Structure probing data (2A3 and DMS) for a 177-nucleotide construct. For 2A3 the reverse transcriptase was SuperScript II with manganese. Reactivities are given for positions 27 through 126. It was measured as part of the RMDB library OK2TRN. Conditions: 150 mM KOAc, 10 mM MgCl2 and 150 mM bicine (pH 8.5), 24 C.

RNA sequence: GGGAACGACUCGAGUAGAGUCGAAAAUGGCGGGGUGCUCUUCGCAGCUUCUCUGUGGAGACCGGUCAGCGGGGCGGCGUGGCCGCUCGCGGCGUCUCCCUGGUGGCAUCCGCACAGCCCGCCGCGGAGCGCGGCAUAGGUUCGCCUAUGCCGCGCUAAAAGAAACAACAACAACAAC
Reactivity to 2A3 in 0.01 (KOAc 150mM, MgCl2 10mM, bicine 150mM(pH8.5), 24C), signal-to-noise 1, nucleotides 027 to 126: u150g020g020c020g000g000g000g000u010g020c040u060c080u270u180c170g050c100a030g030c020u110u030c200u060c000u100g090u140g020g000a020g000a010c080c110g130g160u070c050a080g000c090g000g010g030g010c050g000g010c160g120u160g180g000c010c000g010c000u030c000g020c000g040g010c010g010u000c020u040c000c000c000u030g040g000u000g020g000c010a060u040c080c000g000c000a010c000a020g230c000c030c020g000c000c000g000c010g000g110
Reactivity to DMS in 0.01 (KOAc 150mM, MgCl2 10mM, bicine 150mM(pH8.5), 24C), signal-to-noise 1, nucleotides 027 to 126: u020g010g030c000g010g020g010g000u000g000c070u010c130u010u000c160g010c090a180g010c170u000u000c060u010c040u000g000u010g020g000a020g000a020c080c260g060g010u010c030a100g050c000g010g020g020g020c000g010g000c010g020u000g030g030c000c030g000c020u000c000g040c000g020g010c040g000u000c000u000c000c000c010u000g020g010u000g000g000c010a150u010c110c080g000c030a060c050a140g000c010c010c030g020c000c030g020c180g000g010